[RMDB]
RNA sequence: GGGAACGACUCGAGUAGAGUCGAAAAGCAGGCAGAGGGAGACUGGUAUAAGGAAACAGAUCCAGGGCAGUCUAACGGGAAACUGAGCCCAAGCAUGUGGGACUCAAGACAGAGUCUGGGGAUCAGGAGCAAGGAGAGAGCCAGUCUGGCCUGCAGCCUACCGGUUUAGUUUCGACUAAACCGGUAGAAAAGAAACAACAACAACAAC
Reactivity to 2A3 in 0.01 (KOAc 150mM, MgCl2 10mM, bicine 150mM(pH8.5), 24C), signal-to-noise 3, nucleotides 027 to 156: g000c000a000g000g030c020a010g020a110g180g050g070a020g030a000c000u000g000g000u150a100u080a190a090g100g020a090a080a010c030a070g010a020u040c000c020a020g000g000g000c000a030g010u020c010u070a130a070c120g000g030g050a150a070a040c040u040g010a020g000c020c010c000a000a040g100c080a070u210g040u070g130g000g020a140c010u010c020a040a040g030a020c050a020g110a020g030u000c030u040g120g010g010g030a010u040c010a030g080g030a060g020c060a030a040g030g010a040g000a020g000a000g000c000c000a000g000u000c010u020g060g000c000c000u010g000c010a000g020c000
This 207-nucleotide RNA was probed chemically with 2A3. 2A3 adducts were read by reverse transcription with SuperScript II with manganese. Reactivities are given for positions 27 through 156. The data come from the RNA Mapping Database (RMDB), library OK3TST. The 2A3 profile rests on 1,670 reads. The reactions ran in a buffer of 150 mM KOAc, 10 mM MgCl2 and 150 mM bicine (pH 8.5), at 24 C.